[RMDB]
RNA sequence: GGGAACGACUCGAGUAGAGUCGAAAAGAUAUGGACGUGCACCGAUAAGAAGCAUUCGGAAACGAAUGGCUUCUUUUGACGGCGCACGUCCUAAGUCAAAAGAUGUUGGUGUUCGCACCAACAUCAAGUAUCCAAGUAACUUCGGUUACUUGGAUACAAAAGAAACAACAACAACAAC
Reactivity to DMS in 0.01 (KOAc 150mM, MgCl2 10mM, bicine 150mM(pH8.5), 24C), signal-to-noise 5, nucleotides 027 to 126: g010a010u000a210u010g000g000a010c000g030u000g010c000a030c000c000g020a170u000a050a010g000a010a020g010c000a020u000u000c000g010g000a040a040a120c000g010a010a000u000g010g020c000u000u000c000u000u000u000u010g010a170c030g000g000c030g020c000a000c000g000u000c000c000u000a000a030g000u000c020a090a100a130a130g000a010u000g010u000u000g010g010u000g010u000u010c220g030c010a020c000c000a000a010c000a000u000c000a030a090
Reactivity to 2A3 in 0.01 (KOAc 150mM, MgCl2 10mM, bicine 150mM(pH8.5), 24C), signal-to-noise 3, nucleotides 027 to 126: g000a010u030a010u070g000g010a000c000g000u000g010c000a020c020c010g040a090u150a300a030g000a010a000g010c010a010u000u000c010g010g000a040a030a020c020g000a010a010u040g070g030c000u010u000c020u010u010u020u080g050a010c000g000g000c010g000c010a000c000g000u010c000c000u000a000a000g000u010c000a000a000a020a080g000a000u010g000u010u000g010g010u020g020u060u130c300g030c100a000c000c000a000a000c000a000u000c000a010a000